[RMDB]
RNA sequence: GGGAACGACUCGAGUAGAGUCGAAAACUGCAUCUGUGGAGGACGAAGCAUAUUUCUGUUUCUGGAGGAUUAUUUAUCAUCUGCCGGAAAGUCUUGCAGGUGGCUGGGAUAUGUUCAGUCUGGUAGAAAAAUCAGGAGUCCUUCGGGACUCCUGAAACAAUUAUUACAAGUUCGCUUGUAAUAAUUGAAAAGAAACAACAACAACAAC
Reactivity to DMS in 0.01 (KOAc 150mM, MgCl2 10mM, bicine 150mM(pH8.5), 24C), signal-to-noise 1, nucleotides 027 to 156: c060u000g040c040a060u000c020u010g000u010g000g030a200g030g000a020c000g010a110a110g010c000a030u000a050u000u000u000c040u000g030u010u000u000c020u010g020g000a020g000g000a040u010u000a110u030u010u020a100u010c090a060u000c010u000g000c010c030g000g000a050a130a060g010u000c030u000u010g040c000a040g020g020u020g010g020c040u000g010g060g000a040u000a010u000g010u020u000c040a280g000u010c020u010g030g030u000a110g000a040a030a090a080a160u010c000a020g030g010a050g010u010c030c010u000u010c260g050g050g020a010c020u000c010c000u000g000a000a030a060
Reactivity to 2A3 in 0.01 (KOAc 150mM, MgCl2 10mM, bicine 150mM(pH8.5), 24C), signal-to-noise 2, nucleotides 027 to 156: c020u050g020c000a020u000c050u070g020u050g020g090a250g040g000a000c010g020a030a000g000c000a010u030a010u000u090u080c080u170g150u020u040u000c010u020g020g030a050g030g010a020u040u010a020u070u300u270a070u170c030a020u030c000u040g040c020c000g010g000a040a040a010g000u000c000u000u020g010c000a010g040g010u000g000g030c040u060g000g020g010a020u020a000u070g010u040u020c000a000g000u000c010u040g040g030u110a100g100a040a120a010a040a050u020c000a000g000g010a000g060u000c010c020u030u080c130g030g000g000a000c000u010c000c010u010g000a000a000a000
Chemical mapping of a 207-nucleotide RNA with DMS and 2A3.
The DMS profile rests on 2,537 reads.